[RMDB]
RNA sequence: GGGAACGACUCGAGUAGAGUCGAAAACGGCGCCGACCCGCUUGAGCGGUCCCCGACGCGUCAACGUCGCGCCGGCUGCCCGGUAAACCGGCAAUCGACGACCGAGCCUUGGCGGGCGCGUCGCGCUCACCGACAGAUGGUUCGCCAUCUGUCGGUGAAAAGAAACAACAACAACAAC
Reactivity to 2A3 in 0.01 (KOAc 150mM, MgCl2 10mM, bicine 150mM(pH8.5), 24C), signal-to-noise 4, nucleotides 027 to 126: c000g050g000c040g010c000c040g060a150c000c010c040g020c020u020u040g010a010g020c000g010g020u000c000c000c000c000g000a000c010g010c000g010u030c080a180a090c050g040u030c000g010c040g020c020c000g010g000c050u090g030c020c070c030g010g010u130a130a080a090c000c000g020g030c030a040a120u210c070g080a060c020g050a080c040c000g010a010g080c000c030u130u150g050g010c000g030g000g010c000g000c000g000u010c020g000c000g010c010u020